[RMDB]
RNA sequence: GGGAACGACUCGAGUAGAGUCGAAAAAGAGAGUAUUCGUACUCUCUAAAAACCGUAGGUCCGUGAAGGAGCGAUAAGCUGGGACUUCGAAAGAGGUCCACAGCUUUUGACGCUCCCACGGACCUAAACGGAAAAAAAGCACUGUUCGCAGUGCUAACUUACGAAGUCUAUUCGUAGACUUCGUAAGAAAAGAAACAACAACAACAAC
Reactivity to DMS in 0.01 (KOAc 150mM, MgCl2 10mM, bicine 150mM(pH8.5), 24C), signal-to-noise 1, nucleotides 027 to 156: a040g010a030g000a050g040u000a050u000u030c210g000u000a010c010u000c000u000c000u000a000a050a120a070a060c000c000g010u000a050g040g000u000c010c010g020u000g030a060a250g000g000a010g110c000g010a290u000a000a050g020c010u020g030g000g030a020c000u000u000c000g000a160a160a010g010a030g040g010u000c010c000a080c000a020g010c010u010u000u000u020g000a200c040g050c000u010c000c010c000a000c020g010g000a000c000c010u010a000a010a010c030g000g010a020a010a050a110a100a100a040g000c020a010c020u000g030u010u010c300g040c010a000g030u010g000c010u000a020a010

About this RNA
The record gives the reactivity of an RNA of 207 nucleotides to DMS. For DMS, 2,750 sequencing reads were counted. It was measured as part of the RMDB library RNAMAK. The reactions ran in a buffer of 150 mM KOAc, 10 mM MgCl2 and 150 mM bicine (pH 8.5), at 24 C.